This 207-nucleotide RNA was probed chemically with 2A3. 2A3 adducts were read by reverse transcription with SuperScript II with manganese. Source: RMDB library M2RFPK, as collected in RNAgym. Conditions: 150 mM KOAc, 10 mM MgCl2 and 150 mM bicine (pH 8.5), 24 C. The 2A3 profile rests on 413 reads.
RNA sequence: GGGAACGACUCGAGUAGAGUCGAAAAGCAACGCAAAGCCGCGGCAAGUGGAGUUAGCGAGAAGAGACUAGGCUUUGGUUUCUUCAAGUGAAGCGGUAACCAAUCAGGUGUGGUAGUUACCGUAAAAAUAACCGCUCUUUGUUCGCAAAGAGCGGAACGCACUAUUGGACUUCGGUCCAAUAGUGCGAAAAGAAACAACAACAACAAC
Reactivity to 2A3 in 0.01 (KOAc 150mM, MgCl2 10mM, bicine 150mM(pH8.5), 24C), signal-to-noise 1, nucleotides 027 to 156: g010c020a020a020c090g080c100a100a180a010g000c030c040g010c020g040g000c020a130a100g040u130g000g130a100g070u240u210a010g050c050g060a090g010a010a000g000a000g000a020c020u010a020g120g120c070u240u230u170g000g000u000u020u000c010u000u000c060a060a000g040u050g090a040a000g010c000g000g000u000a000a000c000c030a090a090u130c020a090g060g130u230g020u060g200g000u050a070g010u010u020a000c000c000g000u080a000a000a090a000a000u180a050a070c000c000g000c000u000c010u090u000u000g010u080u110c110g000c070a000a000a000g000a000g000c010g010g000a000a000